[RMDB]
Notes: The record gives the reactivity of an RNA of 177 nucleotides to DMS and 2A3. The reactions ran in a buffer of 150 mM KOAc, 10 mM MgCl2 and 150 mM bicine (pH 8.5), at 24 C. In probing experiments dimethyl sulfate is read out at A N1 and C N3, which are open when not base-paired. Reactivities are given for positions 27 through 126. 2A3 adducts were read by reverse transcription with SuperScript II with manganese.

RNA sequence: GGGAACGACUCGAGUAGAGUCGAAAAAAUGUCGACGAUGAUUUUGUCAAUAUGGCAGGGGGAAAGACUGAUGCUAAUGUUGAUCCUGCUGAUGUUUUGAGGCAGAGUUUUAUGGAUUAUGCAUCGGGCUAUGUAUGUCAUUCGUGACAUACAUAGCAAAAGAAACAACAACAACAAC
Reactivity to DMS in 0.01 (KOAc 150mM, MgCl2 10mM, bicine 150mM(pH8.5), 24C), signal-to-noise 7, nucleotides 027 to 126: a050a030u010g020u010c040g020a040c060g010a050u010g010a110u020u030u000u020g010u010c010a070a090u040a080u020g000g000c010a030g000g000g000g000g000a110a080a050g010a230c010u010g000a010u010g000c010u000a030a020u010g000u010u000g000a060u030c030c000u000g000c000u010g010a140u010g010u010u020u040u000g000a300g000g010c000a010g000a070g000u020u010u020u020a070u020g010g000a030u000u000a030u020g020c000a020u000c000g010g000
Reactivity to 2A3 in 0.01 (KOAc 150mM, MgCl2 10mM, bicine 150mM(pH8.5), 24C), signal-to-noise 9, nucleotides 027 to 126: a000a030u160g040u090c050g010a050c030g020a050u120g060a100u120u100u120u130g060u030c060a070a070u150a110u280g060g000c020a020g020g010g000g000g040a030a050a040g070a030c020u030g010a000u010g010c010u030a040a020u140g140u300u060g030a030u020c000c010u010g000c010u020g010a040u050g140u140u180u150u120g040a030g000g000c010a000g040a040g060u010u040u030u080a140u120g070g000a010u000u020a040u210g000c000a000u000c000g000g020